The data come from the RNA Mapping Database (RMDB), library OK2TRN. Chemical mapping of a 177-nucleotide RNA with DMS and 2A3. 2A3 adducts were read by reverse transcription with SuperScript II with manganese. The RNA was probed in 150 mM KOAc, 10 mM MgCl2 and 150 mM bicine (pH 8.5) at 24 C. DMS (dimethyl sulfate) methylates the pairing face of unpaired adenines and cytosines.
RNA sequence: GGGAACGACUCGAGUAGAGUCGAAAAAGUAUCUCGACACGGGCGCCGUCAUCUUGCUCGCGGGCGAUCGCGACGGCGACACGCUCGAGAUCGAGGAAUCGGACGACGGCACGAACAUCACGGGCGAUACCGUGCAGUGAUUCGUCACUGCACGGUAAAAAGAAACAACAACAACAAC
Reactivity to DMS in 0.01 (KOAc 150mM, MgCl2 10mM, bicine 150mM(pH8.5), 24C), signal-to-noise 2, nucleotides 027 to 126: a040g010u010a010u000c010u010c010g000a090c060a160c040g010g020g050c010g020c030c000g000u010c000a070u000c070u000u020g020c100u000c010g000c130g000g010g010c060g000a100u000c070g030c100g020a070c170g000g000c040g000a010c020a050c070g010c300u000c000g000a060g020a040u000c010g000a120g000g000a060a090u010c110g010g000a060c040g000a050c060g020g050c050a060c010g030a050a080c120a050u000c070a040c090g000g000g000c060g000a220
Reactivity to 2A3 in 0.01 (KOAc 150mM, MgCl2 10mM, bicine 150mM(pH8.5), 24C), signal-to-noise 1, nucleotides 027 to 126: a010g080u050a040u060c000u000c000g020a030c000a030c110g150g070g000c020g000c030c000g000u000c000a070u060c050u040u170g030c010u030c020g000c080g030g000g020c020g010a070u010c030g010c100g110a110c080g090g000c000g020a000c010a000c040g020c030u000c000g040a040g000a010u010c000g010a000g000g090a100a070u150c030g030g020a000c010g070a040c010g030g020c040a020c010g020a060a040c050a040u070c040a000c020g000g070g000c020g010a020